Chemical mapping of a 177-nucleotide RNA with DMS and 2A3. Conditions: 150 mM KOAc, 10 mM MgCl2 and 150 mM bicine (pH 8.5), 24 C. The data come from the RNA Mapping Database (RMDB), library OK2TST. For 2A3 the reverse transcriptase was SuperScript II with manganese. DMS adducts were read by reverse transcription with MarathonRT.
RNA sequence: GGGAACGACUCGAGUAGAGUCGAAAAGACUGAGCACGGCAGUCCACAGGCUGCUGAGAGGGAUUUGUCCAAGUAUGAUUUGUCCACACAAGGAUUUGUCCUGCCUGGGGUAUUUAGAAUGGUGCGCAUGCACUACUGUAUUCGUACAGUAGUGCAUAAAAGAAACAACAACAACAAC
Reactivity to DMS in 0.01 (KOAc 150mM, MgCl2 10mM, bicine 150mM(pH8.5), 24C), signal-to-noise 9, nucleotides 027 to 126: g010a110c050u000g000a110g020c040a110c050g010g010c020a040g010u000c010c130a100c160a100g000g010c020u000g010c080u000g010a090g010a170g000g000g000a050u000u000u000g010u000c010c020a040a260g010u000a040u000g010a150u010u010u010g010u010c090c020a040c080a040c100a060a300g000g000a040u000u000u000g000u000c000c010u000g000c030c020u000g010g000g000g010u000a040u000u000u010a070g010a080a070u010g010g010u000g000c040g020c160
Reactivity to 2A3 in 0.01 (KOAc 150mM, MgCl2 10mM, bicine 150mM(pH8.5), 24C), signal-to-noise 9, nucleotides 027 to 126: g020a000c060u060g020a010g040c030a010c040g060g000c020a010g010u000c020c010a120c010a090g040g000c010u010g000c060u090g060a030g060a030g070g030g010a010u060u050u100g020u000c020c010a040a020g040u050a080u080g070a120u080u080u260g070u070c060c010a030c010a000c020a090a040g030g000a010u060u040u080g020u010c010c020u020g030c000c010u030g000g000g000g030u100a120u060u200u090a120g070a140a090u110g060g010u030g020c040g010c030